[RMDB]
RNA sequence: GGGAACGACUCGAGUAGAGUCGAAAAUUAGAGGUCUGGAUCACAGCGAGACCGGGAGAGACGCUCCCGGGCCGGGUUAGGAACCGGUGCGGCGGGUGGUAUAGGAGCCGGCCGGACCCGGGGAUAAUAACAUGGAUAGUUUCGACUAUCCAUGUUAAAAAGAAACAACAACAACAAC
Reactivity to 2A3 in 0.01 (KOAc 150mM, MgCl2 10mM, bicine 150mM(pH8.5), 24C), signal-to-noise 1, nucleotides 027 to 126: u150u060a050g000a040g020g020u010c060u040g010g010a090u100c040a030c030a070g060c070g030a050g030a080c020c000g000g000g020a010g000a000g030a010c030g030c190u000c000c000c000g000g000g000c010c000g010g010g040u060u140a110g170g040a030a060c020c000g000g010u130g100c020g030g000c070g010g070g040u150g040g090u120a140u170a300g080g000a020g050c020c030g030g000c000c030g010g020a020c000c010c000g000g030g040g020a030u050a110a060
Reactivity to DMS in 0.01 (KOAc 150mM, MgCl2 10mM, bicine 150mM(pH8.5), 24C), signal-to-noise 4, nucleotides 027 to 126: u010u010a110g010a100g000g000u010c040u000g000g000a060u000c050a110c070a080g000c080g000a110g000a170c010c010g010g010g000a040g000a260g020a130c210g000c040u000c000c000c010g000g000g020c010c020g010g000g000u010u010a120g020g010a150a170c050c010g000g010u000g010c020g010g020c030g000g000g020u000g010g010u010a060u010a140g000g000a270g010c000c020g000g000c010c000g000g000a040c030c000c020g020g010g000g010a060u010a040a120
Chemical mapping of a 177-nucleotide RNA with 2A3 and DMS. The 2A3 profile rests on 1,409 reads. The data come from the RNA Mapping Database (RMDB), library M2PK90. High 2A3 reactivity points to a flexible backbone, as in loops and unpaired stretches. Values cover nucleotides 27 to 126.